[RMDB]
RNA sequence: GGGAACGACUCGAGUAGAGUCGAAAAGCUUACUCCUAAAACUGGUACAGGUAUAGCUAUAUCUGUUAAACCAGAGAGUACAGCUGAUCAAGAGACUUAUGGUGGAGCUUCAGUGUGUCUCUAUUGCCAAGGAACAUACCUUCGGGUAUGUUCCUUGAAAAGAAACAACAACAACAAC
Reactivity to DMS in 0.01 (KOAc 150mM, MgCl2 10mM, bicine 150mM(pH8.5), 24C), signal-to-noise 3, nucleotides 027 to 126: g020c000u010u000a000c010u000c010c290u000a060a060a220a300c000u000g000g020u010a040c000a010g010g010u000a000u000a160g030c180u000a090u000a000u000c000u000g000u000u000a040a050a060c000c010a020g010a100g010a010g010u000a010c150a010g010c010u010g010a260u000c060a100a070g010a140g010a020c040u000u010a040u000g000g000u000g010g010a060g010c100u000u000c050a090g020u010g020u000g000u000c010u000c040u010a070u010u000g030c130
Reactivity to 2A3 in 0.01 (KOAc 150mM, MgCl2 10mM, bicine 150mM(pH8.5), 24C), signal-to-noise 1, nucleotides 027 to 126: g000c000u000u020a030c000u010c030c020u070a110a140a040a040c010u000g000g030u030a000c000a000g010g040u020a010u030a030g130c180u170a030u000a010u010c010u000g000u000u080a040a000a000c010c000a010g020a000g000a010g050u010a010c040a070g010c000u000g000a030u130c070a040a020g020a010g020a040c030u080u150a090u180g060g000u070g020g090a080g040c010u130u070c030a090g080u050g000u020g010u080c000u010c000u060a130u030u180g040c030

Background: Chemical mapping of a 177-nucleotide RNA with DMS and 2A3. The reactions ran in a buffer of 150 mM KOAc, 10 mM MgCl2 and 150 mM bicine (pH 8.5), at 24 C. For DMS, 1,959 sequencing reads were counted. It was measured as part of the RMDB library 15KREP. 2A3 adducts were read by reverse transcription with SuperScript II with manganese. For DMS the reverse transcriptase was MarathonRT.